[RMDB]
Chemical mapping of a 177-nucleotide RNA with 2A3 and DMS. The 2A3 profile rests on 16,314 reads. For DMS the reverse transcriptase was MarathonRT. Conditions: 150 mM KOAc, 10 mM MgCl2 and 150 mM bicine (pH 8.5), 24 C.

RNA sequence: GGGAACGACUCGAGUAGAGUCGAAAAGAUAUGGACCUGAGGAGGGAGCUCUGAGUCGGAAACGACUCUGAGCGACGAUCUCCCAGGUCCUAAGUCAAAGUCCUUAGCCGUUCGCGGCUAAGGACAACUUCGUAUUACAGUUCGCUGUAAUACGAAGAAAAGAAACAACAACAACAAC
Reactivity to 2A3 in 0.01 (KOAc 150mM, MgCl2 10mM, bicine 150mM(pH8.5), 24C), signal-to-noise 3, nucleotides 027 to 126: g000a010u020a010u060g000g010a000c010c010u080g030a300g120g010a010g060g120g120a120g000c000u000c020u040g010a010g000u000c000g000g010a030a020a000c010g010a000c000u010c000u030g000a010g010c010g010a040c040g030a060u010c000u010c000c010c000a000g010g000u010c000c000u000a000a000g000u000c010a050a100a080g000u000c000c000u000u000a000g000c000c000g040u060u080c300g040c020g150g000c000u000a000a010g000g000a010c000a000a000
Reactivity to DMS in 0.01 (KOAc 150mM, MgCl2 10mM, bicine 150mM(pH8.5), 24C), signal-to-noise 3, nucleotides 027 to 126: g000a010u000a090u010g000g000a030c000c000u010g000a160g020g000a020g030g010g010a080g020c010u000c000u010g000a020g020u000c010g010g010a020a020a060c000g020a020c000u000c000u000g000a000g010c000g010a070c300g000a170u010c000u000c000c000c000a010g000g000u000c000c000u000a000a060g000u000c010a160a140a160g010u000c000c010u000u000a000g010c000c000g010u010u020c290g040c010g010g000c000u000a000a000g010g000a000c010a010a030